RNA sequence: GGGAACGACUCGAGUAGAGUCGAAAAGGUGAAAGCGAAUCGGGGAAGAUAAGCUAGCAGCAAAAAGGAACCGAUUCCCACCUAGUUCGGAAAGAGAUACCGGGCGAGGCGCUGAAGAAAGAAUCUCAAACUCCCGCAAGUUUCGACUUGCGGGAAACAAUGAAUAAAGAUUCGUCUUUAUUCAUUGAAAAGAAACAACAACAACAAC
Reactivity to DMS in 0.01 (KOAc 150mM, MgCl2 10mM, bicine 150mM(pH8.5), 24C), signal-to-noise 2, nucleotides 027 to 156: g030g050u000g020a080a070a100g010c060g010a030a060u010c030g000g000g010g010a160a170g000a100u000a070a170g010c040u020a160g020c070a170g000c030a030a090a040a190a140g010g000a150a240c000c030g000a120u000u000c000c030c030a030c030c000u000a030g000u000u000c010g000g020a080a060a190g020a150g010a140u000a090c000c000g050g020g010c030g000a040g010g040c030g000c010u000g000a050a060g000a070a070a130g000a090a090u000c020u000c040a060a070a100c090u000c020c010c010g020c010a010a030g010u000u000u000c170g010a020c010u000u000g000c000g000g000g000a030a040a010
Reactivity to 2A3 in 0.01 (KOAc 150mM, MgCl2 10mM, bicine 150mM(pH8.5), 24C), signal-to-noise 5, nucleotides 027 to 156: g020g000u050g040a210a040a020g040c060g000a010a010u010c010g000g020g020g020a020a040g030a180u120a110a050g040c040u080a040g090c090a010g000c030a060a070a050a010a030g140g010a030a000c000c000g000a010u010u000c000c000c000a000c000c000u010a020g010u000u020c020g010g030a110a070a060g040a040g000a010u030a050c000c010g000g000g000c030g010a030g010g030c060g000c090u110g030a040a020g050a050a110a020g070a050a060u020c020u000c060a100a080a070c060u000c010c010c000g000c000a000a000g000u010u120u190c130g060a020c020u000u000g000c010g000g000g000a000a010a000